[RMDB]
RNA sequence: GGGAACGACUCGAGUAGAGUCGAAAAUGUCCCUGGAGGGCCUGGGAGGCUUAGAGAAUGAGGAGCCACGCAGGAACCAGGGCAGGCUCAUGCAGGGGUGUAGGACAGGGUGGAGUUGAGACCCCUAGAAGGGCUGUCACAUUCUGGUGGCUCCUGCUGACCAUCGCUAAUUCGUUAGCGAUGGUCAAAAAGAAACAACAACAACAAC
Reactivity to 2A3 in 0.01 (KOAc 150mM, MgCl2 10mM, bicine 150mM(pH8.5), 24C), signal-to-noise 1, nucleotides 027 to 156: u180g030u020c000c000c030u020g000g070a240g080g030g070c070c070u080g050g100g020a070g000g000c020u000u050a030g040a000g030a210a260u200g020a030g000g000a000g000c000c000a010c000g190c030a050g020g000a000a000c080c060a100g140g000g000c020a030g300g030c000u020c020a050u260g030c000a000g000g000g000g000u030g040u030a070g000g050a020c030a040g000g080g000u090g030g030a120g020u000u010g070a090g070a050c000c000c010c000u000a070g140a060a130g000g000g000c000u000g030u000c000a050c020a180u000u060c000u010g040g000u000g010g010c030u000c000c000u010g050c000